[RMDB]
Annotation:
Chemical mapping of a 177-nucleotide RNA with DMS and 2A3.
RNA sequence: GGGAACGACUCGAGUAGAGUCGAAAAAGGGCGAUAUCUCGCCGCCCGUCUUCGAGCAGAUCUUCAAGAACGCUCGCUUCGCCCAGGGCGGCAAUGCCCUGUUCGAGGGACGCCUGCGUGGCAACCCGGAAAUUAUGUCGUUCGCGACAUAAUUUCCAAAAGAAACAACAACAACAAC
Reactivity to DMS in 0.01 (KOAc 150mM, MgCl2 10mM, bicine 150mM(pH8.5), 24C), signal-to-noise 2, nucleotides 027 to 126: a060g030g000g010c010g040a120u000a090u000c220u000c120g000c020c000g000c000c010c000g010u000c110u000u010c010g010a010g010c020a120g020a100u010c020u000u020c240a160a070g010a050a190c100g000c000u000c000g050c200u020u010c090g000c060c120c090a130g000g000g020c000g010g010c070a020a010u000g010c010c000c000u000g000u000u000c030g010a160g020g000g000a090c300g000c010c040u000g050c160g000u030g020g040c010a060a210c100c020c070
Reactivity to 2A3 in 0.01 (KOAc 150mM, MgCl2 10mM, bicine 150mM(pH8.5), 24C), signal-to-noise 1, nucleotides 027 to 126: a020g010g000g000c000g080a100u060a120u300c140u050c120g000c000c010g030c030c000c010g000u010c040u150u070c020g010a000g000c040a080g020a270u040c050u220u130c200a190a050g020a090a020c020g000c010u010c030g020c070u100u020c030g060c000c040c030a110g000g000g010c000g040g000c020a000a030u130g010c000c010c000u020g080u030u070c050g040a110g010g010g010a020c050g020c010c030u120g070c210g100u230g040g000c020a000a070c050c000c000
The DMS profile rests on 903 reads. 2A3 adducts were read by reverse transcription with SuperScript II with manganese. Values cover nucleotides 27 to 126. The RNA was probed in 150 mM KOAc, 10 mM MgCl2 and 150 mM bicine (pH 8.5) at 24 C.